[RMDB]
RNA sequence: GGGAACGACUCGAGUAGAGUCGAAAAGAAAGAAAGAUUGCAUGUUCUUCAAACGGAGUCAUCGAUGUGUUCUUGUACAAUGCUAAGAACAAUCUUUGACUUUGGUUUGAAGAAAUAUAUGCAGUAACCAGUACGGGAGAUUCGUCUCCCGUACUGGAAAAGAAACAACAACAACAAC
Reactivity to DMS in 0.01 (KOAc 150mM, MgCl2 10mM, bicine 150mM(pH8.5), 24C), signal-to-noise 1, nucleotides 027 to 126: g000a130a010a090g000a180a070a100g000a010u000u000g070c000a000u000g020u000u000c000u000u010c000a000a000a000c000g040g000a000g010u030c010a010u000c040g000a000u000g020u000g020u000u000c000u000u000g000u020a240c300a090a250u070g000c060u010a000a000g000a000a000c000a050a030u000c010u000u000u000g010a000c000u000u040u000g010g020u010u010u000g000a000a000g000a000a000a030u030a030u050a060u000g000c000a000g010u000a070a180
Reactivity to 2A3 in 0.01 (KOAc 150mM, MgCl2 10mM, bicine 150mM(pH8.5), 24C), signal-to-noise 4, nucleotides 027 to 126: g080a020a040a010g170a050a120a020g100a100u080u050g000c020a000u010g050u030u010c000u000u000c010a000a000a000c000g010g000a000g020u000c010a000u020c020g010a010u030g080u010g010u300u000c020u020u030g010u010a080c110a190a280u230g080c030u210a020a000g010a000a000c000a000a000u000c000u030u000u000g000a000c000u000u000u010g140g000u010u000u000g000a000a000g000a000a010a000u030a000u000a010u010g000c020a010g010u030a030a050